[RMDB]
RNA sequence: GGGAACGACUCGAGUAGAGUCGAAAAGCAUAGCGUCAAGUUGGUUGACCAGAAGUCUGGUUAGCAAACAGUGUAAAACCAAAAGGUUAGACGCACUCUGUGAAAAAGUACGAAAGUACAAAGAUAAUCAAAAGAAUUAGUUCGCUAAUUCUUUUGAAAAAGAAACAACAACAACAAC
Reactivity to 2A3 in 0.01 (KOAc 150mM, MgCl2 10mM, bicine 150mM(pH8.5), 24C), signal-to-noise 2, nucleotides 027 to 126: g010c020a050u060a070g020c000g000u030c030a070a050g000u010u010g010g030u000u020g020a000c010c000a000g040a300a060g230u100c000u000g020g000u000u020a000g000c000a040a020a020c000a040g030u030g020u210a190a210a000a010c030c020a150a300a050a000g040g030u040u010a010g010a000c000g030c000a020c030u060c020u030g130u030g030a180a070a040a020a030g000u010a000c010g030a100a030a010g000u010a010c020a040a080a020g110a070u210a100a060
Reactivity to DMS in 0.01 (KOAc 150mM, MgCl2 10mM, bicine 150mM(pH8.5), 24C), signal-to-noise 3, nucleotides 027 to 126: g030c090a050u000a090g010c030g000u010c020a150a060g010u010u010g010g040u010u000g020a020c010c010a000g010a300a220g010u020c020u010g010g010u000u000a030g010c010a020a020a020c000a080g020u010g020u020a070a060a040a020c000c010a080a070a100a140g010g010u000u000a060g010a010c030g030c020a150c120u020c060u020g010u000g000a060a070a100a160a090g000u000a010c010g010a090a080a150g010u010a010c000a060a070a090g000a120u010a090a130
The data come from the RNA Mapping Database (RMDB), library M2PK90.
Structure probing data (2A3 and DMS) for a 177-nucleotide construct.
For DMS, 2,468 sequencing reads were counted.
For 2A3, 1,930 sequencing reads were counted.
The reactions ran in a buffer of 150 mM KOAc, 10 mM MgCl2 and 150 mM bicine (pH 8.5), at 24 C.